The record gives the reactivity of an RNA of 177 nucleotides to 2A3 and DMS. The RNA was probed in 150 mM KOAc, 10 mM MgCl2 and 150 mM bicine (pH 8.5) at 24 C. Values cover nucleotides 27 to 126. The 2A3 profile rests on 6,299 reads. The DMS profile rests on 3,351 reads.
RNA sequence: GGGAACGACUCGAGUAGAGUCGAAAAGAUAUGGAUUCUAUCUCGUUGAGUAACUCUUCGGAAACGAAGAGAAUUACAAUGAUGCGAGAGUAGAAUCCUAAGUCAAACUGGUGGUUCGCCACCAGAAGUAAUAUUCGGAGUUCGCUCCGAAUAUUACAAAAGAAACAACAACAACAAC
Reactivity to 2A3 in 0.01 (KOAc 150mM, MgCl2 10mM, bicine 150mM(pH8.5), 24C), signal-to-noise 3, nucleotides 027 to 126: g000a020u030a020u080g000g000a000u000u010c000u010a040u010c000u000c000g040u050u120g060a010g060u020a030a020c000u000c010u000u010c010g000g020a040a010a020c000g000a020a010g000a000g000a000a030u060u010a000c000a100a300u260g140a070u300g130c020g020a010g020a020g040u020a010g000a000a000u000c000c000u000a030a020g000u000c050a050a050a210c010u010g000g020u010g010g090u060u090c300g040c060c000a010c010c000a000g010a040a010
Reactivity to DMS in 0.01 (KOAc 150mM, MgCl2 10mM, bicine 150mM(pH8.5), 24C), signal-to-noise 3, nucleotides 027 to 126: g000a020u000a160u010g000g000a010u000u000c010u000a000u000c000u010c000g050u010u000g010a300g010u000a010a040c010u000c010u010u000c000g010g000a050a040a120c000g010a020a010g020a010g000a060a040u010u000a020c000a070a140u010g010a090u000g000c010g000a020g010a070g030u000a010g010a000a000u000c000c000u000a020a050g010u000c010a090a150a250c010u000g000g000u000g010g000u010u010c300g020c000c000a010c000c000a000g000a040a100